[RMDB]
The data come from the RNA Mapping Database (RMDB), library OK1LIB. This 177-nucleotide RNA was probed chemically with 2A3 and DMS. The reactions ran in a buffer of 150 mM KOAc, 10 mM MgCl2 and 150 mM bicine (pH 8.5), at 24 C. 2A3 adducts were read by reverse transcription with SuperScript II with manganese. For 2A3, 11,920 sequencing reads were counted.
RNA sequence: GGGAACGACUCGAGUAGAGUCGAAAAGUCUGAGGCUGGCAGACGUCCAGUUGGAAUGAGCUGUAAGCAGACGGGAAGCGAAAGUGCAAAAUGAAGAGAAGCCAGAUUCACUGCAAGUGAUAGGGCGACAACGAUAGAUUUUCGAAUCUAUCGUUGUAAAAGAAACAACAACAACAAC
Reactivity to 2A3 in 0.01 (KOAc 150mM, MgCl2 10mM, bicine 150mM(pH8.5), 24C), signal-to-noise 4, nucleotides 027 to 126: g020u000c010u010g010a020g050g020c030u010g020g020c010a010g000a040c000g000u010c000c000a020g050u050u070g020g030a090a070u030g000a010g020c020u010g010u030a040a010g040c000a000g010a040c000g010g010g040a040a000g010c000g030a080a010a020g050u070g010c010a000a000a040a020u130g020a020a060g040a000g000a090a010g020c000c000a020g010a060u030u020c000a000c010u080g040c110a090a060g000u000g010a020u030a030g020g000g000c010g000
Reactivity to DMS in 0.01 (KOAc 150mM, MgCl2 10mM, bicine 150mM(pH8.5), 24C), signal-to-noise 9, nucleotides 027 to 126: g000u010c010u000g010a110g010g030c010u000g000g010c010a040g010a040c070g010u000c010c010a130g010u010u030g000g000a090a050u010g000a110g000c030u000g010u010a080a080g010c050a060g000a060c060g000g000g020a080a060g010c050g010a050a050a070g000u010g000c060a060a050a060a010u020g010a090a070g010a090g020a080a130g010c010c020a040g000a150u030u000c010a040c010u010g010c210a070a120g010u000g010a030u000a080g000g000g000c020g000